Chemical mapping of a 177-nucleotide RNA with 2A3 and DMS. It was measured as part of the RMDB library M2PK50. For DMS the reverse transcriptase was MarathonRT. The RNA was probed in 150 mM KOAc, 10 mM MgCl2 and 150 mM bicine (pH 8.5) at 24 C. For 2A3, 2,009 sequencing reads were counted.

[RMDB]
RNA sequence: GGGAACGACUCGAGUAGAGUCGAAAAGCAAGAUGCUUCGGCAUCUUGCAGUCGUAGCGCGAUCGACAGAAUUACAGCUUUGUCGAACGAGGAAGAGCGCGCACAUCAUCCCUUUCGAGGGAUGAAAGCUGCUUUCACAUUUCGAUGUGAAAGCAGCAAAAGAAACAACAACAACAAC
Reactivity to 2A3 in 0.01 (KOAc 150mM, MgCl2 10mM, bicine 150mM(pH8.5), 24C), signal-to-noise 1, nucleotides 027 to 126: g000c000a020a000g000a010u030g000c030u100u110c300g100g010c000a000u000c000u000u010g000c000a010g030u000c020g000u030a010g000c020g020c000g000a030u010c000g000a000c000a020g010a050a010u140u180a160c060a040g060c040u000u000u030g010u020c020g000a020a020c030g020a110g080g140a080a030g020a020g090c010g000c030g040c000a000c020a090u010c000a000u000c000c000c000u000u030u040c210g090a010g000g000g000a000u000g020a020a010a000
Reactivity to DMS in 0.01 (KOAc 150mM, MgCl2 10mM, bicine 150mM(pH8.5), 24C), signal-to-noise 2, nucleotides 027 to 126: g010c000a000a000g010a010u000g000c000u000u040c240g010g010c010a000u000c000u000u000g010c000a010g040u000c010g010u000a080g010c030g000c010g020a070u000c000g010a020c010a020g000a030a020u000u020a070c300a100g000c030u020u020u020g000u000c010g000a020a090c060g000a170g020g000a110a090g030a140g000c000g020c000g010c030a100c210a150u000c000a000u000c000c000c000u010u000u000c130g000a040g000g000g000a000u000g010a020a030a070